[RMDB]
RNA sequence: GGGAACGACUCGAGUAGAGUCGAAAAGAAAGGCCAUGCAAUUUUCUGUGGAAUAAUUAUCAAUGGUUACCGUGAUAAACAUGGAGGGGUUUGGCCUCCUCUAACCUUUCCAAAGCAUGUACAUCAGCAAAGUCUAGUGGUUCGCCACUAGACUUUGAAAAGAAACAACAACAACAAC
Reactivity to DMS in 0.01 (KOAc 150mM, MgCl2 10mM, bicine 150mM(pH8.5), 24C), signal-to-noise 2, nucleotides 027 to 126: g010a050a200a040g010g020c010c010a020u000g030c050a070a050u010u000u010u010c030u000g020u010g010g000a220a110u000a090a150u000u000a050u000c010a080a050u000g050g010u020u000a110c080c070g040u000g010a030u000a000a030a180c090a050u000g000g010a030g020g000g000g000u000u020u000g000g010c070c020u010c120c010u010c020u000a060a070c080c130u000u000u020c030c020a070a110a120g000c120a060u010g000u000a050c160a070u020c080a100g000
Reactivity to 2A3 in 0.01 (KOAc 150mM, MgCl2 10mM, bicine 150mM(pH8.5), 24C), signal-to-noise 1, nucleotides 027 to 126: g040a040a070a000g010g000c060c000a020u020g010c060a240a300u040u050u170u000c030u000g060u050g060g050a120a150u170a190a040u140u030a050u070c080a090a240u080g050g030u150u140a160c080c010g030u010g030a010u000a030a090a010c000a030u040g010g010a000g080g020g000g050u000u040u090g020g010c000c000u000c010c000u040c010u000a050a130c000c020u040u040u000c050c070a100a040a030g040c010a000u050g020u080a100c000a100u190c050a030g010